Chemical mapping of a 207-nucleotide RNA with 2A3 and DMS. The DMS profile rests on 3,797 reads. For 2A3, 1,403 sequencing reads were counted.
[RMDB]
RNA sequence: GGGAACGACUCGAGUAGAGUCGAAAAAGAAUUGUACCACCACUGCGUAGCCUAAACGGGCUCUGCAGUGGUUAUUCUUGUAAAGUACUAGGAGUGAAUAGUGGCCCGUAUUGCAGGCAUUAACAUUAAAAGGCAAUCCACUUCGGUGGAUUGCCAAGUAACGUUAAAUCUUCGGAUUUAACGUUACAAAAGAAACAACAACAACAAC
Reactivity to 2A3 in 0.01 (KOAc 150mM, MgCl2 10mM, bicine 150mM(pH8.5), 24C), signal-to-noise 3, nucleotides 027 to 156: a000g090a010a000u140u010g030u090a070c020c010a000c000c000a000c000u000g000c000g030u030a000g010c000c000u140a200a220a100c130g000g000g030c040u010c030u030g000c000a010g000u000g010g020u000u010a000u000u010c000u000u030g070u120a050a060a090g050u030a030c040u030a040g070g070a080g080u040g050a070a100u070a150g030u080g060g020c040c050c060g020u040a110u010u210g080c100a020g030g000c030a060u080u090a070a040c040a040u140u220a060a120a000a010g000g000c000a000a000u000c000c010a000c010u040u080c240g040g000u010g010g000a000u000u000g000c000c000a000a000
Reactivity to DMS in 0.01 (KOAc 150mM, MgCl2 10mM, bicine 150mM(pH8.5), 24C), signal-to-noise 2, nucleotides 027 to 156: a010g000a040a050u000u000g020u000a090c050c090a110c000c000a010c010u020g000c010g030u000a040g000c000c030u010a050a180a160c210g030g000g010c020u000c070u000g020c000a020g060u000g000g010u000u010a000u000u000c020u000u000g000u000a090a110a130g020u000a080c020u000a100g010g000a120g030u010g000a080a060u000a100g010u000g030g030c010c000c010g000u010a050u010u020g000c040a050g010g000c060a100u000u000a040a130c090a070u000u000a040a050a110a180g000g000c000a040a010u000c010c000a010c030u000u010c220g040g020u000g020g010a010u000u030g000c000c010a000a040
Values cover nucleotides 27 to 156.